This 177-nucleotide RNA was probed chemically with 2A3 and DMS. For 2A3 the reverse transcriptase was SuperScript II with manganese. The data come from the RNA Mapping Database (RMDB), libraries RFM100 and RFMREP. The reactions ran in a buffer of 150 mM KOAc, 10 mM MgCl2 and 150 mM bicine (pH 8.5), at 24 C.
RNA sequence: GGGAACGACUCGAGUAGAGUCGAAAAACGAGAGGUGUUAGGCAUUAGCCAGCCACAACGGCUUGCACGCGAGUCUAGACCCCUUCGUGCAAACAUAUUCAAGCAGCCGUUGCAGCAAGCCAAGCCGCAGUGAACUCAUUUUCGAAUGAGUUCACUGAAAAGAAACAACAACAACAAC
Reactivity to 2A3 in 0.01 (KOAc 150mM, MgCl2 10mM, bicine 150mM(pH8.5), 24C), signal-to-noise 8, nucleotides 027 to 126: a010c170g030a090g020a060g050g060u070g060u160u160a070g030g000c060a090u050u080a020g040c030c030a020g020c010c010a040c020a030a010c010g010g000c020u020u020g010c020a010c020g030c090g020a000g020u010c020u070a060g120a140c000c010c010c010u020u030c010g000u010g010c010a010a110a010c060a070u220a130u150u280c090a100a060g020c020a030g000c060c010g000u010u010g010c010a010g010c010a070a000g000c000c020a020a010g020c010c010g000
Reactivity to DMS in 0.01 (KOAc 150mM, MgCl2 10mM, bicine 150mM(pH8.5), 24C), signal-to-noise 6, nucleotides 027 to 126: a050c120g020a120g000a090g000g020u000g020u010u010a060g020g040c000a130u010u010a140g020c020c070a180g030c030c040a270c020a050a040c030g010g010c010u000u000g030c010a060c060g020c290g030a040g010u010c050u010a080g000a150c180c140c300c010u020u000c020g010u010g000c030a060a070a110c250a060u020a070u040u030c220a090a100g020c160a060g000c000c010g000u020u000g000c050a100g000c020a090a090g000c030c030a100a110g000c020c050g040